[RMDB]
RNA sequence: GGGAACGACUCGAGUAGAGUCGAAAAGCCAUCGCUUUCGAGCGAUGGCAUUGCCGAAAGAGGACCUGGGGGUGUCUGGGCUGCUAAACUCAUCAGCCGUUCUACCGCUAAAUUUCGAUUUAGCGAACCGUUAGCAAAAGUUCGCUUUUGCUAACGGAAAAGAAACAACAACAACAAC
Reactivity to DMS in 0.01 (KOAc 150mM, MgCl2 10mM, bicine 150mM(pH8.5), 24C), signal-to-noise 2, nucleotides 027 to 126: g010c010c000a010u000c000g020c020u000u010u010c180g010a030g010c030g020a020u000g010g000c000a000u000u000g010c060c010g010a050a100a090g020a130g000g000a050c040c010u010g000g010g010g000g020u000g000u000c050u000g000g000g000c020u000g000c110u000a110a080a060c050u000c060a110u000c030a060g010c010c010g020u000u000c010u000a110c120c050g000c010u010a010a020a030u000u010u010c170g010a060u010u000u000a000g000c000g010a060a100
Reactivity to 2A3 in 0.01 (KOAc 150mM, MgCl2 10mM, bicine 150mM(pH8.5), 24C), signal-to-noise 1, nucleotides 027 to 126: g000c000c000a010u000c000g010c000u100u100u120c190g120a000g010c010g000a000u000g020g000c010a010u010u120g120c050c000g070a120a170a040g120a030g060g010a070c040c020u040g000g010g000g000g000u050g000u090c020u050g040g060g080c020u010g000c010u090a120a070a080c000u000c020a090u000c020a020g000c010c010g000u020u000c050u170a210c060c010g000c010u010a000a010a010u110u060u030c160g050a010u000u010u010a000g000c000g020a040a040